[RMDB]
RNA sequence: GGGAACGACUCGAGUAGAGUCGAAAAAUGGUGACCUUCGGGUCACCAUGGUGGGUAGCUGCGUUAAUUUAAUAGCUACGCUUAAUAAAUUUAAUUAACGCAAUGGAGCCUGCUUCGGCAGGCUCAACAUGAUGGUUCCUUUCGAGGAACCAUCAUGAAAAGAAACAACAACAACAAC
Reactivity to 2A3 in 0.01 (KOAc 150mM, MgCl2 10mM, bicine 150mM(pH8.5), 24C), signal-to-noise 1, nucleotides 027 to 126: a000u010g000g010u000g000a020c010c030u060u000c250g090g020g000u010c010a000c010c000a000u000g030g030u090g020g080g010u040a070g010c040u010g020c000g000u010u000a000a000u010u010u120a120a110u020a060g030c020u070a040c130g030c040u120u120a120a070u120a130a180a030u110u180u030a010a000u010u000a020a000c000g000c020a080a120u070g050g010a010g000c000c010u000g000c030u030u050c090g130g000c030a000g030g000c000u010c010a000a010
Reactivity to DMS in 0.01 (KOAc 150mM, MgCl2 10mM, bicine 150mM(pH8.5), 24C), signal-to-noise 1, nucleotides 027 to 126: a000u000g000g030u000g010a020c000c000u010u010c200g030g020g020u000c000a000c000c000a020u010g010g000u000g000g010g000u010a060g000c090u000g020c010g030u010u000a010a000u000u000u000a050a110u000a070g010c010u010a080c120g000c080u000u000a090a110u000a040a110a120u010u000u000a010a010u010u000a000a000c000g010c010a120a100u000g000g010a020g000c000c000u000g000c000u010u000c180g030g000c000a000g000g000c000u000c000a010a050